[RMDB]
RNA sequence: GGGAACGACUCGAGUAGAGUCGAAAAGAUAUGGAAGCUAUAGACAGGGGAGUGAGCUUUCGGAAACGAAAGGCUCACAUCGAUCCCGAAGCUUCCUAAGUCAAACACGAUGGUUCGCCAUCGUGAACAUCUUCUGCAAGUUCGCUUGCAGAAGAUGAAAAGAAACAACAACAACAAC
Reactivity to DMS in 0.01 (KOAc 150mM, MgCl2 10mM, bicine 150mM(pH8.5), 24C), signal-to-noise 3, nucleotides 027 to 126: g000a020u000a030u010g000g020a000a000g020c000u000a130u000a190g000a170c280a200g000g000g000g000a100g040u000g000a010g010c000u000u000u000c010g000g000a030a010a050c000g010a020a010a040g020g000c000u000c000a010c000a040u010c160g010a140u000c010c000c020g010a090a020g000c000u000u000c000c000u010a000a070g000u000c000a140a100a230c000a010c000g000a010u000g000g000u000u010c220g020c010c000a000u000c000g000u000g000a060a170
Reactivity to 2A3 in 0.01 (KOAc 150mM, MgCl2 10mM, bicine 150mM(pH8.5), 24C), signal-to-noise 2, nucleotides 027 to 126: g000a010u020a000u050g020g000a000a000g000c000u050a040u180a300g180a300c200a270g070g000g000g020a270g010u000g000a000g000c000u000u000u010c000g000g000a010a010a000c010g020a040a050a040g270g050c000u030c000a000c000a000u000c040g140a160u130c010c010c010g040a010a010g000c000u010u000c000c000u000a010a000g020u020c020a130a110a050c010a000c030g000a000u000g000g080u030u050c290g020c120c000a000u000c000g000u010g020a010a010